RNA sequence: GGGAACGACUCGAGUAGAGUCGAAAAAGACGGAAACCCAUCGACCGUCACCAGAUGCUGCAUCACCUGAUCACUGAUGGCUCAACGGUAUCCGGCGGUACAACUGAAUACUUGUAGCUGCCUUUUGAAAAGGAGUUCAUCUUCGGAUGAACUCCAAGACAAUCAGCUUGUUCGCAAGCUGAUUGUCAAAAGAAACAACAACAACAAC
Reactivity to 2A3 in 0.01 (KOAc 150mM, MgCl2 10mM, bicine 150mM(pH8.5), 24C), signal-to-noise 3, nucleotides 027 to 156: a000g050a000c010g010g040a080a070a060c030c030c020a070u130c050g080a070c010c000g010u000c000a000c040c030a030g050a060u090g020c050u050g040c000a000u020c000a020c000c030u080g030a080u040c010a000c030u040g030a030u040g050g000c030u050c090a120a080c050g020g010u030a040u040c080c010g010g030c010g030g000u020a010c020a050a000c050u130g120a150a060u170a160c020u000u040g000u040a050g140c040u040g040c000c000u120u150u010u140g110a110a090a020a040g010g000a000g000u020u000c000a000u000c000u020u080c180g110g000a000u000g000a000a000c000u000c000c000a000a000